Structure probing data (2A3 and DMS) for a 177-nucleotide construct. For DMS, 748 sequencing reads were counted. For DMS the reverse transcriptase was MarathonRT.
[RMDB]
RNA sequence: GGGAACGACUCGAGUAGAGUCGAAAACUACAGAGGAAUCGUGUGAACGGGGCGCAUGAUAUCUAGCAUACCCGAUACUGUCAACGCUAAAUUAGUACAUUUGGGUCGACUGCUCAGCAUCUGAGCAGUGCCGUCAGGCGUUCGCGCCUGACGGCACAAAAGAAACAACAACAACAAC
Reactivity to 2A3 in 0.01 (KOAc 150mM, MgCl2 10mM, bicine 150mM(pH8.5), 24C), signal-to-noise 2, nucleotides 027 to 126: c030u070a030c030a000g180a000g070g090a040a020u010c010g000u000g000u030g130a080a080c070g000g030g020g000c020g000c010a020u100g050a000u080a060u000c040u020a030g040c050a050u090a170c050c000c020g000a030u090a060c050u060g030u120c030a080a000c050g030c160u100a040a100a150u190u120a050g070u100a030c010a090u090u070u120g050g020g010u070c050g050a000c020u020g010c010u000c010a020g040c000a150u010c020u060g000a000g000c000a000
Reactivity to DMS in 0.01 (KOAc 150mM, MgCl2 10mM, bicine 150mM(pH8.5), 24C), signal-to-noise 1, nucleotides 027 to 126: c070u050a060c130a090g000a070g010g030a070a090u000c030g050u010g000u010g000a130a300c180g030g000g000g010c050g000c010a060u000g000a070u000a070u000c050u000a050g000c130a080u010a040c010c030c010g010a120u030a070c080u010g010u000c090a070a080c050g000c030u000a020a030a070u000u000a060g000u000a090c050a090u000u000u000g020g000g010u010c110g000a110c020u000g000c000u000c000a050g000c200a150u030c050u000g030a000g020c010a000